[RMDB]
RNA sequence: GGGAACGACUCGAGUAGAGUCGAAAAGGAACAUCCUUCGGGAUGUUCCAUAGGCGGCGCCUCUCGCUAAGCGGCGCGCAGAGGCGCGCAGCGCAGCAUGAAAGUAAGCCUAGUUCGCUAGGCUUAAGUAAUGAUGGCAGUUCGCUGCCAUCAUUACAAAAGAAACAACAACAACAAC
Reactivity to DMS in 0.01 (KOAc 150mM, MgCl2 10mM, bicine 150mM(pH8.5), 24C), signal-to-noise 2, nucleotides 027 to 126: g010g010a030a010c000a000u000c000c000u000u010c160g010g020g000a000u000g000u000u000c000c000a030u000a020g030g000c020g000g010c020g010c020c000u000c010u000c080g030c040u010a070a160g030c120g010g020c280g000c100g010c170a040g010a000g030g000c000g010c000g000c010a030g020c010g020c080a070g010c100a100u000g000a070a070a060g010u000a020a000g000c010c000u000a010g000u000u010c200g010c010u000a010g010g000c000u000u000a000a060